An RNA of 177 nucleotides, treated with DMS and read out base by base.
RNA sequence: GGGAACGACUCGAGUAGAGUCGAAAAGAAUAUGUUGCUCAGGUGUGAUCAAGCCGAGUCCUCACUGCUAUUUAUAUUGGCUGUAUGCUACAGAUCUGGACACAGUUGUGGCUGGCACCAUGCAGCCGUCCGGAACACCAUUCGUGGUGUUCCGGACAAAAGAAACAACAACAACAAC
Reactivity to DMS in 0.01 (KOAc 150mM, MgCl2 10mM, bicine 150mM(pH8.5), 24C), signal-to-noise 1, nucleotides 027 to 126: g020a130a040u010a080u020g010u010u000g010c050u000c060a120g000g010u000g010u020g000a120u000c120a090a120g040c060c040g010a060g030u000c080c030u010c050a140c060u010g010c090u000a090u010u000u020a080u020a200u120u020g010g010c010u000g010u000a040u000g000c060u000a020c070a050g000a140u010c050u000g010g030a120c240a070c110a130g000u010u020g000u000g000g020c050u010g010g000c030a100c120c020a060u000g000c010a010g010c010c110
For DMS the reverse transcriptase was MarathonRT. Reactivities are given for positions 27 through 126.